[RMDB]
An RNA of 177 nucleotides, treated with 2A3 and DMS and read out base by base. DMS adducts were read by reverse transcription with MarathonRT. 2A3 adducts were read by reverse transcription with SuperScript II with manganese.
RNA sequence: GGGAACGACUCGAGUAGAGUCGAAAAAGGCAGCAGGCGCGCAAAUUACCUAUCCCUGACUCAGGGAGGUAGUAAACAGAAAUAAUGGCACAUGUUUUAAACAUGUGAUCGGAACGAAUGGUUUCUAGCAUUCAUGAUUAUUCGUAAUCAUGAAUGCAAAAGAAACAACAACAACAAC
Reactivity to 2A3 in 0.01 (KOAc 150mM, MgCl2 10mM, bicine 150mM(pH8.5), 24C), signal-to-noise 8, nucleotides 027 to 126: a000g040g010c000a010g000c000a010g030g030c020g000c000g000c040a050a060a050u060u000a020c000c010u050a130u130c010c000c000u140g180a300c110u090c290a000g000g000g000a010g020g000u010a000g010u050a010a100a050c080a040g180a030a100a030u250a060a050u150g040g000c000a000c010a000u000g060u000u070u060u180a120a220a010c000a000u000g000u000g010a090u060c010g030g010a050a060c050g080a100a070u150g100g000u000u000u000c000u000a020
Reactivity to DMS in 0.01 (KOAc 150mM, MgCl2 10mM, bicine 150mM(pH8.5), 24C), signal-to-noise 5, nucleotides 027 to 126: a050g010g020c030a040g020c010a050g020g030c020g040c040g020c080a040a080a060u010u000a020c010c000u000a140u010c000c000c010u020g000a170c160u040c040a030g010g000g030a020g000g010u010a010g000u000a070a100a120c190a070g000a100a060a070u050a070a130u030g020g010c010a000c000a000u010g010u000u000u020u030a070a080a030c010a000u000g010u000g000a040u010c020g000g020a120a050c110g000a080a080u020g010g010u000u000u000c010u000a160